[RMDB]
RNA sequence: GGGAACGACUCGAGUAGAGUCGAAAAACAUCAUUAUUUCCAUCUAUUCCACCAGGACCGUGUACGGCAACCUUUUAUUUAAAUGUACCAAAAACAAGCGAUACGACAUUAUCUUAAAACGCAUGCGGGAACGAUGGAUGUCCAUGCUUACAACCACAGUCAGGCAAUAGUUCGCUAUUGCCUGACUAAAAGAAACAACAACAACAAC
Reactivity to 2A3 in 0.01 (KOAc 150mM, MgCl2 10mM, bicine 150mM(pH8.5), 24C), signal-to-noise 2, nucleotides 027 to 156: a000c060a030u070c020a010u170u160a080u140u110u000c010c000a040u040c010u020a160u010u100c020c000a130c030c010a090g070g090a200c030c020g100u080g080u150a030c030g070g000c080a050a100c020c020u090u220u140u020a170u040u120u090a020a230a080u010g010u110a050c000c050a020a060a040a020a000c040a110a030g030c030g100a020u040a060c070g080a010c020a010u040u080a060u180c030u020u080a040a040a010a000c040g020c020a010u070g040c010g000g010g020a030a030c010g020a000u030g070g030a010u060g010u000c040c000a000u010g000c000u060u110a060c080a030a030c020c280a050c070